RNA sequence: GGGAACGACUCGAGUAGAGUCGAAAAAGGUGUGUCUGUGUGCUAUGGGAGAUUCAUGGUCCGGGAGUAAAGGAUGAGGGUGUUGAUCGUAAGUGGAUCUGGAGGCAAUUUCUUUCACAGUAAACAAUCAACUGGACGUGUUCGCGCGUUCAGUUGAAAAAGAAACAACAACAACAAC
Reactivity to DMS in 0.01 (KOAc 150mM, MgCl2 10mM, bicine 150mM(pH8.5), 24C), signal-to-noise 9, nucleotides 027 to 126: a060g010g010u010g010u010g000u010c020u010g010u010g010u020g010c020u010a060u020g000g000g000a070g010a070u010u000c050a070u010g020g000u010c040c040g000g000g000a080g010u020a050a070a080g000g010a040u010g000a100g000g000g010u010g000u010u010g000a060u010c070g020u000a050a080g020u020g000g010a050u010c030u010g000g010a100g000g000c090a050a060u010u010u010c020u010u010u010c040a050c080a080g010u030a050a070a080c190a060a120
Reactivity to 2A3 in 0.01 (KOAc 150mM, MgCl2 10mM, bicine 150mM(pH8.5), 24C), signal-to-noise 4, nucleotides 027 to 126: a000g030g000u010g010u000g000u000c010u010g060u000g020u010g010c000u030a030u060g010g010g010a030g000a040u040u020c010a000u070g020g010u020c030c000g010g010g020a020g020u060a010a040a000g080g010a030u050g030a030g000g010g000u010g000u010u060g010a020u010c010g010u050a100a040g030u040g040g010a020u010c000u010g020g010a010g020g000c010a010a050u030u030u000c000u000u060u020c030a020c030a030g020u080a010a060a010c020a030a100
Notes:
Chemical mapping of a 177-nucleotide RNA with DMS and 2A3. The RNA was probed in 150 mM KOAc, 10 mM MgCl2 and 150 mM bicine (pH 8.5) at 24 C. For 2A3 the reverse transcriptase was SuperScript II with manganese. The DMS profile rests on 56,191 reads.